[RMDB]
RNA sequence: GGGAACGACUCGAGUAGAGUCGAAAAGAUAUGGAUCUCGAUAGGACAUGCUCACACUCGGAAACGAGGAGAGCAACAGCCUAUGAGAUCCUAAGUCAAAAGGCAACCCACUUCGGUGGGUUGCCAACAUAGGCAUCAUGUUCGCAUGAUGCCUAUGAAAAGAAACAACAACAACAAC
Reactivity to 2A3 in 0.01 (KOAc 150mM, MgCl2 10mM, bicine 150mM(pH8.5), 24C), signal-to-noise 2, nucleotides 027 to 126: g030a000u040a000u100g000g010a000u000c010u010c050g100a020u020a010g010g020a070c100a260u060g000c010u000c010a140c000a050c210u000c000g000g020a030a030a000c000g010a000g000g010a040g000a000g090c010a010a010c050a010g050c000c000u010a000u030g000a000g000a000u010c000c000u000a010a000g030u000c020a010a050a140a010g020g000c010a000a010c000c020c000a010c020u060u100c300g080g000u000g010g000g010u000u000g010c000c010a010a000
Reactivity to DMS in 0.01 (KOAc 150mM, MgCl2 10mM, bicine 150mM(pH8.5), 24C), signal-to-noise 4, nucleotides 027 to 126: g000a030u000a270u010g010g000a000u000c000u010c000g020a030u000a010g010g010a070c100a180u010g020c000u000c000a060c170a300c020u000c000g000g000a060a040a110c000g000a010g000g000a210g010a000g010c010a010a040c180a140g000c010c000u010a010u000g000a000g010a010u000c000c000u000a000a070g000u010c030a090a120a120a100g010g000c000a010a030c000c000c010a010c000u000u000c210g010g000u000g000g000g020u000u000g010c000c000a000a010